[RMDB]
RNA sequence: GGGAACGACUCGAGUAGAGUCGAAAAACGCGCGGAUCGAUCCGAUCGCGCCAUAUACGUCACAGGUACUGCGCCGACUGGCCAUAGUCAGCGUACGAUCAGCGCAUGGCGCUCGGUACUGUGCGCGCUAACAUGCAGAAUUCGUUCUGCAUGUUAGAAAAGAAACAACAACAACAAC
Reactivity to 2A3 in 0.01 (KOAc 150mM, MgCl2 10mM, bicine 150mM(pH8.5), 24C), signal-to-noise 9, nucleotides 027 to 126: a000c030g010c000g000c020g110g040a100u100c040g050a090u040c070c050g010a040u100c070g000c000g000c000c000a040u160a020u030a090c070g060u100c070a030c040a150g080g040u130a140c030u040g010c000g000c000c010g020a030c010u050g110g090c090c040a140u110a070g010u010c010a010g000c000g020u030a040c080g020a070u050c030a010g000c010g000c050a060u080g020g000c000g000c020u020c040g010g010u040a110c020u050g040u040g030c020g000c000g010
Reactivity to DMS in 0.01 (KOAc 150mM, MgCl2 10mM, bicine 150mM(pH8.5), 24C), signal-to-noise 9, nucleotides 027 to 126: a130c110g010c010g020c000g000g010a060u000c100g010a180u010c080c030g010a030u010c140g010c010g010c000c090a020u000a070u010a130c030g000u000c060a080c160a090g010g010u000a070c070u000g000c010g010c010c020g010a030c010u000g010g020c210c230a080u010a040g010u000c010a070g010c010g020u010a030c200g000a050u000c040a150g000c010g010c070a060u000g010g000c000g010c010u000c040g000g000u000a100c030u000g010u000g020c030g000c040g010
An RNA of 177 nucleotides, treated with 2A3 and DMS and read out base by base.
2A3 adducts were read by reverse transcription with SuperScript II with manganese.
Values cover nucleotides 27 to 126.